[RMDB]
RNA sequence: GGGAACGACUCGAGUAGAGUCGAAAAGACAAUCAGUUCGCUGAUUGUCAAAAGAGCAGCUAUGAGCACAAGUGUCAUAGCAAAAGAUCGAAAGAUCAAAAAAAAGCAGAUACUUCGGUAUCUGCAACCCACAGAUUAAGUUCGCUUAAUCUGUGGGAAAAGAAACAACAACAACAAC
Reactivity to DMS in 0.01 (KOAc 150mM, MgCl2 10mM, bicine 150mM(pH8.5), 24C), signal-to-noise 2, nucleotides 027 to 126: g010a030c000a010a010u000c000a000g020u000u000c240g020c000u000g000a010u000u000g020u000c000a030a040a070a120g000a120g030c090a130g010c010u010a010u000g010a030g000c010a110c220a050a190g030u020g020u000c000a030u000a020g010c000a100a070a080a120g000a000u000c000g000a130a110a160g000a010u010c000a000a010a000a050a060a070a180a140g000c020a000g000a010u000a010c000u000u000c160g020g020u000a000u000c000u000g000c020a030a020
Reactivity to 2A3 in 0.01 (KOAc 150mM, MgCl2 10mM, bicine 150mM(pH8.5), 24C), signal-to-noise 1, nucleotides 027 to 126: g000a000c000a000a000u000c000a000g040u030u100c170g040c110u010g000a000u000u000g000u020c000a010a020a000a030g050a010g020c040a000g000c010u010a000u010g010a010g050c030a060c060a270a070g070u060g010u270c010a010u010a000g000c010a020a020a010a020g000a000u010c010g020a070a040a030g000a010u000c000a000a000a030a000a000a000a050a120g000c000a000g010a010u000a010c000u030u080c200g100g000u000a000u000c000u000g000c000a010a010

An RNA of 177 nucleotides, treated with DMS and 2A3 and read out base by base. For 2A3, 5,339 sequencing reads were counted. Values are in units of 0.01, from 0 to 300, in steps of 10. DMS adducts were read by reverse transcription with MarathonRT. 2A3 is a SHAPE reagent: it acylates the 2'-hydroxyl of flexible nucleotides of all four kinds. Conditions: 150 mM KOAc, 10 mM MgCl2 and 150 mM bicine (pH 8.5), 24 C.